[RMDB]
RNA sequence: GGGAACGACUCGAGUAGAGUCGAAAACGGAAACCCCGGGAACAAGGAAACAGGAGGAGGAUCGGUAGAAAAGAGCGAGACCUCCGAUUCGAGAGCUCCUGGACUCCUCAGCUCUGGAGUCCUCCGAAGAGUAACCAGUUCGCUGGUUACAAAAGAAACAACAACAACAAC
Reactivity to DMS in 0.01 (KOAc 150mM, MgCl2 10mM, bicine 150mM(pH8.5), 24C), signal-to-noise 9, nucleotides 027 to 129: c100g050g020a050a070a050c030c000c010c010g010g020g020a060a050c100a080a040g020g000a030a070a100c100a040g000g000a060g010g040a100g000g000a050u010c040g000g000u080a070g030a080a060a070a060g030a080g030c050g010a090g030a120c100c020u020c010c040g010a050u000u000c030g000a120g030a130g060c040u000c020c020u010g000g000a060c060u010c010c000u000c160a100g020c070u000c080u030g000g000a020g010u000c000c040u020c040c040g000a070a060g010a130
Reactivity to 2A3 in 0.01 (KOAc 150mM, MgCl2 10mM, bicine 150mM(pH8.5), 24C), signal-to-noise 9, nucleotides 027 to 129: c040g030g020a030a030a020c000c000c000c010g010g000g010a060a050c040a060a040g030g010a050a030a010c020a030g020g020a010g020g030a020g010g010a020u020c020g020g030u150a050g090a050a130a070a010g100a020g070c100g030a040g050a120c000c010u000c010c010g010a020u000u030c040g030a040g010a030g140c000u000c000c010u030g010g020a030c030u020c000c010u050c040a040g040c030u030c040u070g000g010a020g020u010c000c030u010c010c010g040a060a020g060a010